[RMDB]
Source information
The data come from the RNA Mapping Database (RMDB), library OK1LIB. Chemical mapping of a 177-nucleotide RNA with 2A3 and DMS. The RNA was probed in 150 mM KOAc, 10 mM MgCl2 and 150 mM bicine (pH 8.5) at 24 C.
RNA sequence: GGGAACGACUCGAGUAGAGUCGAAAAAGCAACAUCUACAGAUUUUCAUAGCAGCACACCCUGAAGUGCAGUUUGGUGUUCCACAAGGCCUGCAUGCCAAACAAUUGUAGAGUUUUGAAAGAUUUUGUGAAAUAGGUUCCUUCGGGAACCUAUUUCAAAAAGAAACAACAACAACAAC
Reactivity to 2A3 in 0.01 (KOAc 150mM, MgCl2 10mM, bicine 150mM(pH8.5), 24C), signal-to-noise 1, nucleotides 027 to 126: a000g110c060a050a070c010a160u000c000u050a000c020a010g070a050u000u030u040u140c050a080u140a040g010c070a010g010c020a040c000a020c030c000c040u050g190a160a040g050u040g000c030a030g010u000u090u050g000g000u010g070u110u030c060c010a110c030a040a110g110g010c000c000u000g000c020a000u110g000c000c000a000a110a000c020a070a140u080u080g020u070a010g000a030g000u000u000u040u280g170a110a160a080g070a140u050u030u070u120g170
Reactivity to DMS in 0.01 (KOAc 150mM, MgCl2 10mM, bicine 150mM(pH8.5), 24C), signal-to-noise 2, nucleotides 027 to 126: a060g000c060a050a050c200a110u010c010u000a060c070a110g000a110u000u010u010u030c030a110u030a140g060c090a070g000c050a060c090a080c080c010c050u020g010a030a050g000u030g010c010a150g000u010u020u040g000g020u030g000u020u010c030c040a050c120a080a110g000g000c050c030u000g040c130a030u000g040c040c000a000a010a020c110a080a100u040u000g030u000a070g010a150g000u010u000u000u020g000a030a050a070g020a190u010u000u000u000g020
Notes
For 2A3 the reverse transcriptase was SuperScript II with manganese.